[RMDB]
RNA sequence: GGGAACGACUCGAGUAGAGUCGAAAAGACACCACCACGCUGGCACCCAGUUGAUCGGCGCGAGAUUUAAUCGCCGCGACAAUUUGCGACGGCGCGUGCAGGGCCAGACUGGAGGUGGCAACGCCAACUUCCUUAGGAGUUUCGACUCCUAAGGAAGAAAAGAAACAACAACAACAAC
Reactivity to 2A3 in 0.01 (KOAc 150mM, MgCl2 10mM, bicine 150mM(pH8.5), 24C), signal-to-noise 8, nucleotides 027 to 126: g020a010c010a000c010c010a000c010c000a020c080g020c010u010g020g000c030a300c070c020c020a070g030u100u110g110a250u120c040g060g000c010g020c030g020a040g010a130u140u200u300a120a080u090c020g040c060c020g020c030g040a070c050a110a170u070u090u260g020c040g040a120c040g090g040c030g000c020g020u030g030c030a060g000g020g000c000c000a010g040a070c030u050g000g020a060g010g000u010g010g000c020a040a020c040g050c040c000a030a070
Reactivity to DMS in 0.01 (KOAc 150mM, MgCl2 10mM, bicine 150mM(pH8.5), 24C), signal-to-noise 8, nucleotides 027 to 126: g000a100c050a030c000c000a080c010c000a040c300g000c000u000g000g010c020a130c040c040c070a130g010u000u000g000a100u000c060g010g020c030g000c020g010a090g000a160u010u010u010a140a140u010c020g030c030c040g000c010g000a060c160a070a100u000u010u000g020c010g020a080c070g010g000c020g010c050g040u000g010c070a100g000g000g000c010c000a020g000a070c080u010g000g000a060g020g020u000g010g000c030a070a080c120g010c030c030a100a220

The data come from the RNA Mapping Database (RMDB), library OK2TST. Structure probing data (2A3 and DMS) for a 177-nucleotide construct.